[RMDB]
RNA sequence: GGGAACGACUCGAGUAGAGUCGAAAAGACGUCAUCUAUGACUACACAGUCUUAGAUAUCAAGAACAACGAGGUCAUGAUCAAGGAUGCAUCUUAUGGUCUGACCACGUACUGUAACAUCCUCGACAACGCAGGAAAGGUCAAACUCAACUGCACAGCCAGAGUCCACUAUUCGUAGUGGACUCUGGAAAAGAAACAACAACAACAAC
Reactivity to 2A3 in 0.01 (KOAc 150mM, MgCl2 10mM, bicine 150mM(pH8.5), 24C), signal-to-noise 2, nucleotides 027 to 156: g040a000c080g050u060c040a000u000c000u000a000u050g010a000c000u180a040c170a020c050a050g010u000c000u020u000a020g000a030u040a040u060c150a180a010g060a120a020c040a000a000c070g030a040g020g000u000c010a010u290g010a010u030c000a010a010g010g020a060u130g190c180a180u100c000u030u140a200u150g010g000u060c010u020g000a000c010c010a000c020g030u030a030c000u020g070u070a000a100c010a130u040c010c040u050c010g060a050c020a100a030c150g030c060a000g000g060a160a060a000g000g010u050c030a070a080a140c030u070c000a030a160c020u030g000c010a020c030a030g060
Chemical mapping of a 207-nucleotide RNA with 2A3. The data come from the RNA Mapping Database (RMDB), library OK3TST. Values cover nucleotides 27 to 156.